Structure probing data (DMS and 2A3) for a 177-nucleotide construct. Conditions: 150 mM KOAc, 10 mM MgCl2 and 150 mM bicine (pH 8.5), 24 C. For 2A3, 2,031 sequencing reads were counted. DMS adducts were read by reverse transcription with MarathonRT.

RNA sequence: GGGAACGACUCGAGUAGAGUCGAAAAGCCUGAGAUCGAGCAGGAAGGCAUGCCUUCCAUUGGGCAGGAAGGGGUGCCGCCGCUGGUUCAGAGCGGUACCAUCCAGAUCCUGGGAGCGACGGGUGAGGAUGCGUGAACAUUUCGAUGUUCACGCAUCAAAAGAAACAACAACAACAAC
Reactivity to DMS in 0.01 (KOAc 150mM, MgCl2 10mM, bicine 150mM(pH8.5), 24C), signal-to-noise 2, nucleotides 027 to 126: g010c010c010u000g000a050g030a050u020c040g020a120g030c050a130g040g040a080a080g040g010c030a020u000g000c000c000u000u000c000c010a100u000u000g010g000g040c200a130g000g000a080a010g010g000g020g050u000g000c020c010g010c020c000g020c010u000g020g000u010u010c110a040g000a110g000c010g010g010u010a130c070c060a120u000c050c040a090g010a080u010c030c020u000g000g020g010a090g010c070g010a100c060g000g010g020u010g010a180g010
Reactivity to 2A3 in 0.01 (KOAc 150mM, MgCl2 10mM, bicine 150mM(pH8.5), 24C), signal-to-noise 1, nucleotides 027 to 126: g020c020c000u040g020a050g050a150u120c170g030a010g000c090a090g110g000a090a110g030g020c020a030u090g180c000c000u000u000c010c000a040u050u080g070g110g000c020a040g010g000a010a030g010g000g050g000u010g010c010c000g000c010c010g000c030u050g140g000u120u110c020a020g020a020g030c020g030g010u030a030c000c000a020u020c000c000a020g040a140u000c020c000u040g020g000g040a140g080c010g030a050c020g000g050g010u060g010a040g030